[RMDB]
The data come from the RNA Mapping Database (RMDB), library OK3TST. Chemical mapping of a 207-nucleotide RNA with 2A3. For 2A3, 365 sequencing reads were counted. The reactions ran in a buffer of 150 mM KOAc, 10 mM MgCl2 and 150 mM bicine (pH 8.5), at 24 C.

RNA sequence: GGGAACGACUCGAGUAGAGUCGAAAAGUCGAAGAGUGACCUGCCUGGAGCUCUCAAACCAAUGUUAGGGAACUUGACUCGAUUAAUACAAGCACCAAGACAGCAUAAUGGUUAUCCCCUCAAUGAUGCUGUAAUGGUAAAAGACAAGAUGUAGCGAGAGCCGUAGUAGUUUCGACUACUACGGCUCAAAAGAAACAACAACAACAAC
Reactivity to 2A3 in 0.01 (KOAc 150mM, MgCl2 10mM, bicine 150mM(pH8.5), 24C), signal-to-noise 1, nucleotides 027 to 156: g070u010c010g000a020a000g000a020g020u030g070a040c000c000u000g010c010c000u050g000g040a140g020c060u010c020u000c220a180a070a120c010c020a180a140u160g040u160u150a080g030g030g000a000a080c000u040u040g020a040c000u000c020g020a000u010u250a130a060u200a110c030a030a010g050c010a030c000c000a000a080g120a000c000a000g000c000a000u080a120a090u260g010g000u120u250a300u300c000c070c030c020u060c030a040a200u070g020a000u050g030c000u000g000u000a000a000u000g000g000u020a220a000a000a000g150a000c020a020a000g100a060u100g030u010a000g060c150g050a060